[RMDB]
Conditions: 150 mM KOAc, 10 mM MgCl2 and 150 mM bicine (pH 8.5), 24 C. Structure probing data (DMS and 2A3) for a 177-nucleotide construct. DMS adducts were read by reverse transcription with MarathonRT.
RNA sequence: GGGAACGACUCGAGUAGAGUCGAAAACUAUGUACAGACAGUACAGUGGAUAAGGUCUCUAGAUAUCCAACUUAAACAAUGGUACUUGCAGUGGUAUCUAUCAAGAUAGGCAGGCUAUCAUAGAAAGUAGAUGUGUAUUAUUCGUAGUACGCAUCUGAAAAGAAACAACAACAACAAC
Reactivity to DMS in 0.01 (KOAc 150mM, MgCl2 10mM, bicine 150mM(pH8.5), 24C), signal-to-noise 9, nucleotides 027 to 126: c040u010a060u020g010u000a010c020a140g010a130c240a150g000u000a010c020a040g010u020g010g010a060u000a050a090g010g000u010c040u010c020u010a040g000a090u010a020u000c010c020a110a120c100u010u010a010a080a110c150a070a030u000g000g010u000a030c020u000u000g010c050a120g020u020g010g020u010a000u000c000u000a070u050c220a080a040g000a020u000a020g010g000c040a030g000g010c190u000a010u000c010a020u000a070g010a070a050a070g010
Reactivity to 2A3 in 0.01 (KOAc 150mM, MgCl2 10mM, bicine 150mM(pH8.5), 24C), signal-to-noise 6, nucleotides 027 to 126: c010u020a040u040g000u000a010c020a070g180a030c030a020g040u010a000c000a010g020u020g020g010a030u010a030a030g060g040u010c010u000c000u000a000g010a010u040a010u000c010c000a040a020c030u040u060a000a010a000c030a030a040u030g000g000u010a010c000u000u030g000c000a040g040u060g070g020u030a010u000c010u000a100u060c050a060a010g000a010u010a010g010g020c020a000g020g000c010u000a000u000c010a010u010a010g070a020a090a000g050